[RMDB]
Chemical mapping of a 177-nucleotide RNA with 2A3 and DMS. For DMS the reverse transcriptase was MarathonRT. Values cover nucleotides 27 to 126.

RNA sequence: GGGAACGACUCGAGUAGAGUCGAAAAGAUAUGGACGAUAUGAUGCCGAAGACAGCGAGUCGGAAACGACUCGUCGAGGAACUACAUCUAAGUCGUCCUAAGUCAAAGACUGUCUUCGGACAGUCAAGAUGUGUGCACUGUUCGCAGUGCACACAUCAAAAGAAACAACAACAACAAC
Reactivity to 2A3 in 0.01 (KOAc 150mM, MgCl2 10mM, bicine 150mM(pH8.5), 24C), signal-to-noise 1, nucleotides 027 to 126: g030a030u090a030u200g020g000a000c000g030a010u020a020u270g030a000u000g010c090c050g040a070a020g080a010c040a010g030c040g000a030g010u000c030g000g000a000a050a000c000g020a030c010u030c010g010u030c000g030a030g000g100a080a040c050u210a080c170a020u020c000u090a250a050g040u010c030g000u000c000c000u030a140a010g060u010c040a000a050a150g000a000c000u000g010u050c040u060u090c160g150g000a000c000a010g000u000c000a020a020
Reactivity to DMS in 0.01 (KOAc 150mM, MgCl2 10mM, bicine 150mM(pH8.5), 24C), signal-to-noise 2, nucleotides 027 to 126: g060a000u020a300u000g000g000a000c000g020a000u000a300u020g000a050u000g030c080c030g020a020a140g020a060c300a180g040c080g000a000g020u000c000g000g000a080a070a100c000g000a010c000u000c000g040u000c010g000a110g000g060a110a060c110u030a200c010a010u000c010u000a110a220g000u000c010g010u000c000c000u000a000a070g000u000c070a020a060a090g000a010c010u000g000u030c010u000u000c240g010g000a000c000a020g000u000c030a000a080